[RMDB]
RNA sequence: GGGAACGACUCGAGUAGAGUCGAAAAGAACGCUAUGCUCAUUCUAUUAGCGUAUGGAAAGAGUCUCUACUUAUACGCUAAUGAGUAGAUUCAUGCUUAGCGUAGCGUGAAGACUCGCAUAGUGUUAGAUCGUUAUGUUAUUCGUGACAUAGCGAUCAAAAGAAACAACAACAACAAC
Reactivity to 2A3 in 0.01 (KOAc 150mM, MgCl2 10mM, bicine 150mM(pH8.5), 24C), signal-to-noise 9, nucleotides 027 to 126: g090a020a000c000g000c000u000a000u010g000c010u020c110a180u240u020c060u160a030u010u010a010g000c000g010u000a000u020g070g100a100a130a050g050a040g120u070c050u020c010u150a120c010u100u110a010u000a010c000g000c000u000a010a010u040g020a000g020u070a030g010a050u020u020c010a010u030g010c000u070u060a080g140c050g220u070a000g000c000g000u030g000a010a000g100a070c010u010c060g000c010a010u010a010g010u010g010u030u020a040
Reactivity to DMS in 0.01 (KOAc 150mM, MgCl2 10mM, bicine 150mM(pH8.5), 24C), signal-to-noise 9, nucleotides 027 to 126: g010a040a010c000g000c000u000a000u000g000c010u020c190a130u020u020c060u030a020u000u000a010g000c010g010u000a010u010g010g010a100a090a080g000a090g010u030c100u010c040u020a170c060u010u020a030u000a000c000g010c000u000a000a010u010g000a020g010u010a070g000a190u010u000c010a010u000g000c020u000u010a110g010c180g040u010a040g010c030g030u000g000a020a010g000a080c070u010c100g000c010a010u000a000g010u000g000u000u000a070